Structure probing data (DMS) for a 177-nucleotide construct. It was measured as part of the RMDB library OK2TRN. The reactions ran in a buffer of 150 mM KOAc, 10 mM MgCl2 and 150 mM bicine (pH 8.5), at 24 C. Reactivities are given for positions 27 through 126. For DMS the reverse transcriptase was MarathonRT.
RNA sequence: GGGAACGACUCGAGUAGAGUCGAAAACUCACGCGCGCUGGCCGCCACGCUGCACUCCUACAUCCUCGCCCUGACCCCCAGGGGGCUGAAGGCGAUAGAGGAGACGGGCGCGGACCCGGAGUGCUGCGUAGGCAGCUCAGUUCGCUGAGCUGCCUACAAAAGAAACAACAACAACAAC
Reactivity to DMS in 0.01 (KOAc 150mM, MgCl2 10mM, bicine 150mM(pH8.5), 24C), signal-to-noise 3, nucleotides 027 to 126: c020u000c020a080c160g010c010g030c060g010c020u000g000g020c050c010g020c010c040a030c030g020c030u000g010c020a030c010u000c000c000u000a180c300a280u000c010c000u000c020g020c010c000c010u000g000a300c180c000c010c020c050a140g020g000g040g010g000c030u010g020a120a090g010g010c040g020a240u010a050g010a040g000g000a030g000a230c300g010g000g020c020g000c170g000g000a040c110c120c300g000g000a030g000u000g010c000u010g010c030